[RMDB]
RNA sequence: GGGAACGACUCGAGUAGAGUCGAAAACUACAUAAAUUCGUUUAUGUAGCAUCGGGGACGCGCAGACUCCCCGUCAGACGGCACUAGCCUUCCAAGCUCUGCACUCAACAGCUUUCGAGCUGUUGAAGUCGAACAUGGUAUUCGUACCAUGUUCGACAAAAGAAACAACAACAACAAC
Reactivity to 2A3 in 0.01 (KOAc 150mM, MgCl2 10mM, bicine 150mM(pH8.5), 24C), signal-to-noise 3, nucleotides 027 to 126: c000u010a000c010a000u010a010a020a030u070u100c140g060u030u020u000a010u000g010u000a000g040c020a100u210c020g000g000g000g010a010c080g060c010g000c250a000g010a020c010u010c000c000c020c000g000u000c000a000g000a030c030g010g000c020a040c300u190a070g000c010c000u010u000c020c080a000a010g000c040u000c000u010g000c010a020c030u010c000a000a000c000a000g020c020u020u090u220c230g160a010g010c000u000g020u010u000g010a020a030
Reactivity to DMS in 0.01 (KOAc 150mM, MgCl2 10mM, bicine 150mM(pH8.5), 24C), signal-to-noise 3, nucleotides 027 to 126: c010u000a000c000a000u000a000a020a030u000u010c170g020u000u000u010a000u000g010u000a000g010c110a120u000c000g020g000g000g000a020c150g010c150g010c040a010g000a020c020u000c000c000c000c000g020u000c100a000g010a040c080g000g020c010a090c300u020a090g010c000c000u000u010c020c300a020a040g000c030u010c000u000g000c050a300c210u000c020a020a010c010a000g000c000u000u000u000c160g000a010g030c000u010g010u000u000g010a000a050